[RMDB]
RNA sequence: GGGAACGACUCGAGUAGAGUCGAAAAUGCAAGUAGUGCUAUUGUUGGAAUCACCGUACCUAUAUAGGUUUACGCUCCAAGAUCGGUGGAUAGCAGCCCUAUCAAUAUCUAGGAGAACUGUGCUAUGAAAACGGUAUUGGCUUCGGCCAAUACCGAAUCUGAUCUAUGGCUUCGGCCAUAGAUCAGAAAAAGAAACAACAACAACAAC
Reactivity to 2A3 in 0.01 (KOAc 150mM, MgCl2 10mM, bicine 150mM(pH8.5), 24C), signal-to-noise 1, nucleotides 027 to 156: u110g040c110a010a010g150u050a070g020u030g090c030u080a020u120u060g060u100u000g070g080a110a050u100c000a000c010c000g030u090a020c010c020u060a060u030a050u130a300g070g000u050u030u040a020c000g020c000u000c020c000a050a050g000a040u060c080g040g020u010g010g030a010u040a010g040c070a000g000c000c000c000u030a030u040c020a070a050u020a080u160c000u010a030g020g020a010g000a060a000c090u090g090u070g030c020u050a020u170g070a120a020a000a060c000g000g040u000a000u000u000g000g060c000u070u030c240g090g010c010c000a000a000u000a000c000c000g000a010a010

This 207-nucleotide RNA was probed chemically with 2A3. Values cover nucleotides 27 to 156.